[RMDB]
An RNA of 177 nucleotides, treated with 2A3 and DMS and read out base by base. Conditions: 150 mM KOAc, 10 mM MgCl2 and 150 mM bicine (pH 8.5), 24 C.
RNA sequence: GGGAACGACUCGAGUAGAGUCGAAAAAUCUUGAACUGGAUCUUCUUCACAUUCAGAAGGCUCUAUUUGUAGUGCACCUAAAAGGGCCGCUAUUUCUUCAAAAGUCAUAACAUAGUCUACUGCAUCCCAUCCCCAUCGGAUUCGUCCGAUGGGGAUGAAAAGAAACAACAACAACAAC
Reactivity to 2A3 in 0.01 (KOAc 150mM, MgCl2 10mM, bicine 150mM(pH8.5), 24C), signal-to-noise 5, nucleotides 027 to 126: a000u050c060u020u100g030a040a070c040u040g010g020a020u020c000u100u020c010u160u110c160a070c010a170u060u060c000a030g030a070a030g050g010c010u000c010u050a200u140u070u080g080u080a010g010u040g090c060a150c080c020u060a130a090a060a040g050g010g000c030c010g000c010u050a050u050u100u000c020u130u080c050a060a090a040a060g050u080c020a080u060a200a040c030a070u060a050g030u000c020u050a100c030u080g040c020a020u030c010c010
Reactivity to DMS in 0.01 (KOAc 150mM, MgCl2 10mM, bicine 150mM(pH8.5), 24C), signal-to-noise 1, nucleotides 027 to 126: a070u030c030u000u000g000a060a150c250u020g020g000a010u000c060u010u030c160u010u000c030a110c100a040u000u000c000a130g020a270a090g000g020c030u000c020u000a030u000u010u010g000u010a070g030u000g000c050a120c000c000u020a030a060a130a070g000g000g050c030c040g000c160u030a050u000u000u040c020u000u050c110a000a080a120a120g000u000c000a050u020a070a060c120a100u000a140g000u000c000u030a030c050u060g010c000a090u000c040c030
2A3 adducts were read by reverse transcription with SuperScript II with manganese. The 2A3 profile rests on 2,895 reads. The DMS profile rests on 1,222 reads. High DMS reactivity at an A or C suggests that its Watson-Crick edge is free.